[RMDB]
RNA sequence: GGGAACGACUCGAGUAGAGUCGAAAAGGCUACACAUGCGCGGCGCGUGAUUUGUGCAAGAAUCCGUUUUGGUGUGGCGGAUUUAAUUUGCCAUUGUCCAUCAUAGAUUCGUCGUCGCGCAUGGAAAGGGAAUGAUAAACUUCGGUUUAUCAUUCCCAAAAGAAACAACAACAACAAC
Reactivity to 2A3 in 0.01 (KOAc 150mM, MgCl2 10mM, bicine 150mM(pH8.5), 24C), signal-to-noise 5, nucleotides 027 to 126: g120g050c040u100a040c080a000c000a030u010g000c000g000c010g020g000c000g000c010g020u090g050a090u030u050u150g130u140g010c020a020a030g030a020a020u040c030c020g010u010u010u080u100g110g010u060g020u070g030g000c000g000g000a000u000u000u070a150a190u050u080u060g010c010c010a020u030u090g080u070c070c020a070u080c050a030u090a110g050a100u090u080c030g110u070c000g010u000c000g110c010g000c000a000u000g010g000a010a010a010
Reactivity to DMS in 0.01 (KOAc 150mM, MgCl2 10mM, bicine 150mM(pH8.5), 24C), signal-to-noise 2, nucleotides 027 to 126: g000g020c030u000a060c120a100c000a010u000g000c000g000c000g010g000c010g020c100g020u040g000a050u040u040u000g010u030g020c140a040a090g010a000a000u000c000c020g020u000u000u040u020g000g060u000g040u000g000g040c010g030g030a020u000u010u000a060a090u010u010u000g000c010c030a020u020u000g000u040c060c080a000u000c070a060u010a130g010a100u010u030c050g000u030c010g010u000c000g050c010g010c020a000u000g000g000a040a060a110
The data come from the RNA Mapping Database (RMDB), library OK1LIB. Chemical mapping of a 177-nucleotide RNA with 2A3 and DMS. For DMS the reverse transcriptase was MarathonRT. High 2A3 reactivity points to a flexible backbone, as in loops and unpaired stretches. For 2A3 the reverse transcriptase was SuperScript II with manganese. The reactions ran in a buffer of 150 mM KOAc, 10 mM MgCl2 and 150 mM bicine (pH 8.5), at 24 C.